[RMDB]
RNA sequence: GGGAACGACUCGAGUAGAGUCGAAAAACUGAGCAUGUUAUGUUGGAAAGAUAACAUGCUGUAGUAAUAAUGAAUUGCGGAACGCCUUAGGCUGGAAACAGAGCAGGGUUAGCAAUCGCUUGUAUACGGUGCAAAGUUUGCGAUGAGCGAUUAGUAUUGUGUAGCAAGUCUUCGGACUUGCUACACAAAAAGAAACAACAACAACAAC
Reactivity to 2A3 in 0.01 (KOAc 150mM, MgCl2 10mM, bicine 150mM(pH8.5), 24C), signal-to-noise 1, nucleotides 027 to 156: a000c040u040g010a000g010c010a010u000g000u010u020a010u060g200u140u110g050g040a070a080a010g020a020u010a000a000c000a000u000g000c000u010g000u000a000g000u000a000a170u070a100a060u070g140a040a070u090u110g020c090g000g120a100a020c050g010c070c030u030u010a070g040g010c010u050g000g040a060a030a090c010a010g020a040g060c070a020g000g000g000u000u050a030g010c000a000a000u000c020g010c040u040u000g100u070a210u070a160c130g090g000u160g000c000a030a110a050g070u080u150u090g070c000g010a000u000g000a050g030c010g020a070u050u140a030g070u020a120u060